Source: RMDB library TTRDES, as collected in RNAgym.
The record gives the reactivity of an RNA of 177 nucleotides to 2A3 and DMS.
DMS adducts were read by reverse transcription with MarathonRT.
Conditions: 150 mM KOAc, 10 mM MgCl2 and 150 mM bicine (pH 8.5), 24 C.

[RMDB]
RNA sequence: GGGAACGACUCGAGUAGAGUCGAAAAGAUAUGGAUAAGGGCAGCUUUUGACGUCUUCAGUGUCGGAAACGACACUGAGACGAUAAGCUGCCUUAUCCUAAGUCAAAACGGGAUGUUCGCAUCCCGACGUUUGCCAAUAGUUCGCUAUUGGCAAACGAAAAGAAACAACAACAACAAC
Reactivity to 2A3 in 0.01 (KOAc 150mM, MgCl2 10mM, bicine 150mM(pH8.5), 24C), signal-to-noise 2, nucleotides 027 to 126: g040a020u030a050u130g000g000a020u030a010a200g110g200g180c000a000g030c010u030u080u220u250g300a180c030g030u020c080u270u160c120a010g000u010g000u000c000g000g000a070a100a060c020g000a000c000a000c000u000g000a010g000a010c020g010a000u010a010a000g000c010u010g000c010c000u000u000a000u000c010c000u010a010a000g030u000c040a000a000a000a160c030g000g000g000a000u030g060u170u180c300g010c170a000u040c000c000c010g030a010
Reactivity to DMS in 0.01 (KOAc 150mM, MgCl2 10mM, bicine 150mM(pH8.5), 24C), signal-to-noise 3, nucleotides 027 to 126: g010a050u010a300u000g000g010a000u010a010a040g020g000g010c000a000g010c000u010u000u000u000g020a240c100g020u000c000u010u010c020a000g000u000g010u000c000g000g010a120a070a200c020g030a030c000a000c000u000g020a010g000a020c000g000a070u000a030a000g010c000u000g020c010c000u000u010a000u000c000c010u000a050a110g000u000c030a090a060a120a130c040g020g000g000a030u000g010u000u010c240g010c000a020u000c000c000c000g010a050